[RMDB]
RNA sequence: GGGAACGACUCGAGUAGAGUCGAAAACGCUGGGUUGGACCCAUCCAUCAACAGCUACUGAAGCGCGCACGGUAGACAUGAGGAUGCUAACAACCUGUGCUGAAGCGCGCACGGCAACCGAAAGGUGCGAAAACGGACACUGUUCGCAGUGUCCGAAGAUCACCCAGUCGUUCGCGACUGGGUGAUCAAAAGAAACAACAACAACAAC
Reactivity to 2A3 in 0.01 (KOAc 150mM, MgCl2 10mM, bicine 150mM(pH8.5), 24C), signal-to-noise 1, nucleotides 027 to 156: c030g000c020u030g000g010g000u010u010g020g020a090c000c000c030a000u000c000c010a250u180c070a100a170c080a120g060c000u010a000c030u020g090a300a070g000c020g020c000g000c000a000c060g040g000u020a020g040a230c070a180u210g080a200g060g000a020u020g030c080u100a070a040c030a000a000c010c010u000g010u030g000c010u090g020a110a050g000c000g000c000g020c030a020c030g020g000c040a030a010c020c000g000a050a060a040g000g000u010g000c050g040a070a070a060a060c000g000g000a000c000a000c010u020g050u130u100c300g030c090a000g000u000g000u020c000c000g000a010a010

The record gives the reactivity of an RNA of 207 nucleotides to 2A3. For 2A3, 840 sequencing reads were counted.